Overview
An RNA of 177 nucleotides, treated with DMS and 2A3 and read out base by base. For 2A3 the reverse transcriptase was SuperScript II with manganese.
RNA sequence: GGGAACGACUCGAGUAGAGUCGAAAAUUCGCGUGAUUCGUCACGCGAAGAUAACCGAGAACCGUGCUCGGUAUAAACAUGGAACCCUUGGAAACAAGGGAAAUAGGCAGGCCUUCGGGCCUGCCAAUGAUAUGUAAACGUUCGCGUUUACAUAUCAAAAAGAAACAACAACAACAAC
Reactivity to DMS in 0.01 (KOAc 150mM, MgCl2 10mM, bicine 150mM(pH8.5), 24C), signal-to-noise 6, nucleotides 027 to 126: u000u000c000g010c000g030u000g000a040u000u010c170g010u000c000a000c000g020c000g010a000a010g010a110u010a100a300c000c000g000a010g000a110a120c020c040g020u000g000c010u000c010g010g010u000a030u000a050a050a070c070a020u000g010g010a200a280c000c000c000u000u000g000g000a150a110a230c000a000a000g000g000g000a010a030a060u000a100g000g010c010a000g000g010c000c000u000u010c200g030g010g020c000c000u000g000c000c000a000a010
Reactivity to 2A3 in 0.01 (KOAc 150mM, MgCl2 10mM, bicine 150mM(pH8.5), 24C), signal-to-noise 2, nucleotides 027 to 126: u010u000c010g000c000g000u010g010a030u020u070c160g020u020c120a000c000g010c000g000a000a000g000a010u030a010a090c000c000g000a000g020a050a070c020c020g000u040g010c010u000c010g000g020u020a020u060a020a010a010c020a010u050g030g020a090a070c000c000c000u000u000g020g010a050a050a010c000a000a020g010g020g030a010a020a010u030a010g010g000c000a000g010g020c010c010u060u180c240g040g010g000c000c000u000g000c000c000a000a000